RNA sequence: GGGAACGACUCGAGUAGAGUCGAAAAGCUACGUACGAUUACGCGCGUAUACGGCUAUAGCGCGCUAUAGCUAUACGGCAUGCAUUACGUACGUAUAAUGCAUGCAUGCCGGCAUAUAUCGCGCGCGCGCAUUGUGGAACUUCGGUUCCACAAUGCGAAAAGAAACAACAACAACAAC
Reactivity to 2A3 in 0.01 (KOAc 150mM, MgCl2 10mM, bicine 150mM(pH8.5), 24C), signal-to-noise 3, nucleotides 027 to 126: g040c020u060a010c030g010u020a010c000g060a160u260u110a030c060g040c000g000c000g020u040a040u010a070c140g020g010c010u000a000u030a040g090c140g000c040g000c080u020a010u030a020g010c000u010a010u030a110c020g000g010c000a010u000g010c010a000u010u120a080c040g000u010a010c000g010u010a050u070a010a010u100g080c070a010u010g000c000a000u010g000c000c030g030g020c060a110u200a010u030a010u240c050g000c000g010c000g000c010g010
Reactivity to DMS in 0.01 (KOAc 150mM, MgCl2 10mM, bicine 150mM(pH8.5), 24C), signal-to-noise 3, nucleotides 027 to 126: g010c090u020a020c010g020u000a020c010g010a290u010u020a090c060g000c030g000c010g010u000a030u000a140c230g010g010c000u000a010u000a020g000c040g020c250g040c020u000a010u000a020g000c020u000a100u000a050c000g000g000c000a020u010g000c000a020u000u010a050c070g000u000a010c070g020u000a120u010a040a100u010g010c130a060u000g020c000a000u030g000c010c010g010g000c180a080u000a110u010a020u000c080g010c010g010c000g000c120g040